Structure probing data (DMS and 2A3) for a 177-nucleotide construct. For 2A3, 1,256 sequencing reads were counted. It was measured as part of the RMDB library OK1LIB. Conditions: 150 mM KOAc, 10 mM MgCl2 and 150 mM bicine (pH 8.5), 24 C.

RNA sequence: GGGAACGACUCGAGUAGAGUCGAAAAUUUGUGAAAAUGAGGAGUGUCAGUGUAUGCGGAUACAUUAAUGUCAAGGGGAGAUCAAGGUGGUGUGGUCCGCCUCUCGUUUUUGGCAAAAACUUGCGAGCUAUAUUAAAUUAUUCGUAAUUUAAUAUAGAAAAGAAACAACAACAACAAC
Reactivity to DMS in 0.01 (KOAc 150mM, MgCl2 10mM, bicine 150mM(pH8.5), 24C), signal-to-noise 3, nucleotides 027 to 126: u020u020u020g000u020g020a060a050a060a090u040g010a080g000g000a070g010u020g000u010c070a040g000u010g010u020a020u020g010c130g020g020a050u010a010c010a010u000u000a020a010u000g010u000c000a010a000g000g000g000g000a010g000a010u010c220a100a030g000g040u000g010g000u010g020u010g000g000u020c010c010g030c050c010u010c020u000c010g000u010u000u020u000u000g010g000c030a030a060a080a080a070c120u010u000g000c070g010a100g020
Reactivity to 2A3 in 0.01 (KOAc 150mM, MgCl2 10mM, bicine 150mM(pH8.5), 24C), signal-to-noise 2, nucleotides 027 to 126: u050u030u050g030u010g030a060a050a060a110u140g050a040g080g030a080g030u130g050u060c080a020g030u010g000u070a040u050g080c040g010g000a000u000a030c020a000u030u070a050a040u040g020u020c000a010a020g010g000g010g000a030g010a020u030c040a060a000g040g010u030g000g000u010g030u050g030g030u040c000c030g020c000c010u030c000u010c030g090u010u010u030u060u090g030g000c030a030a010a000a070a130c050u040u110g060c040g030a060g060

The DMS profile rests on 5,078 reads.